[RMDB]
RNA sequence: GGGAACGACUCGAGUAGAGUCGAAAAGAAAGUGUGCACCGUCUCAGCUUUUGUAUACGCAUGACUUCGGUCAUGCGCAGGACUUUUUGCUGAGACUUUAGUCCUGCGUAUACUGGUGCUCACGAAAGGGUACGCGGUCCUUCGGGAUUGCGUACCCAAAAGAAACAACAACAACAAC
Reactivity to DMS in 0.01 (KOAc 150mM, MgCl2 10mM, bicine 150mM(pH8.5), 24C), signal-to-noise 4, nucleotides 027 to 126: g020a100a090a080g010u000g010u010g010c020a000c010c020g050u010c000u010c000a010g010c020u010u010u010u010g010u010a040u000a110c040g000c000a010u000g000a010c000u000u060c180g010g000u000c000a000u000g000c030g020c040a000g000g010a020c010u000u010u010u010u010g000c020u010g000a040g010a020c010u000u000u020a060g020u000c010c010u000g000c100g020u030a140u030a060c120u020g010g000u000g000c000u000c000a030c000g010a080a070a120
Reactivity to 2A3 in 0.01 (KOAc 150mM, MgCl2 10mM, bicine 150mM(pH8.5), 24C), signal-to-noise 7, nucleotides 027 to 126: g170a040a070a020g000u000g010u010g000c010a010c010c020g030u000c010u000c020a020g000c020u040u070u080u100g050u020a080u010a040c020g000c010a000u000g000a000c000u030u050c230g090g000u000c000a000u010g000c000g000c000a010g020g100a040c010u050u080u020u120u190g010c020u040g020a010g010a020c000u000u020u020a010g000u020c010c030u060g090c070g050u080a030u050a190c070u070g000g000u010g000c020u020c000a000c000g050a070a040a020